[RMDB]
RNA sequence: GGGAACGACUCGAGUAGAGUCGAAAACUUGAGCACUGAAAGAUAUUUUGAAUUUAAAGUAAGAUGGAGAAAGUGAUGGAAGCUAAAUCACAGAGGAUAGAAAUACGAUCAAUCGUAUUCAGAACAGAAACAUCUUGGGCUCAAUGUCUGGGAACAAUAUAUGCGCCAUAUUCGUAUGGCGCAUAUAAAAAGAAACAACAACAACAAC
Reactivity to 2A3 in 0.01 (KOAc 150mM, MgCl2 10mM, bicine 150mM(pH8.5), 24C), signal-to-noise 1, nucleotides 027 to 156: c000u090u070g000a030g000c100a070c200u070g080a060a030a000g080a050u110a250u200u300u160u300g030a130a120u080u110u210a160a060a000g000u040a060a010g000a010u030g030g000a040g000a080a130a020g000u000g030a040u050g000g070a110a000g060c080u110a060a060a000u030c000a000c000a080g030a030g050g000a000u110a140g010a000a000a000u040a000c050g010a030u140c110a110a120u040c010g000u010a000u000u030c040a070g020a150a000c000a040g000a050a000a000c000a020u000c000u050u080g000g000g010c000u000c040a040a000u020g010u030c060u010g000g010g000a080a080c030a110a000
Reactivity to DMS in 0.01 (KOAc 150mM, MgCl2 10mM, bicine 150mM(pH8.5), 24C), signal-to-noise 1, nucleotides 027 to 156: c040u000u010g010a000g020c010a180c090u060g000a210a050a030g020a090u000a050u010u000u010u000g000a090a120u010u020u000a190a040a150g000u010a000a070g000a050u000g040g000a170g010a100a050a230g030u050g060a120u040g060g020a100a200g080c060u000a070a090a040u000c010a030c000a100g000a110g000g000a100u010a060g000a110a000a040u000a010c060g000a200u010c280a090a070u000c000g000u020a010u000u000c010a110g040a050a160c020a260g000a060a000a020c000a050u000c030u000u000g010g010g000c000u000c010a000a040u000g050u000c040u000g000g010g000a040a060c050a020a180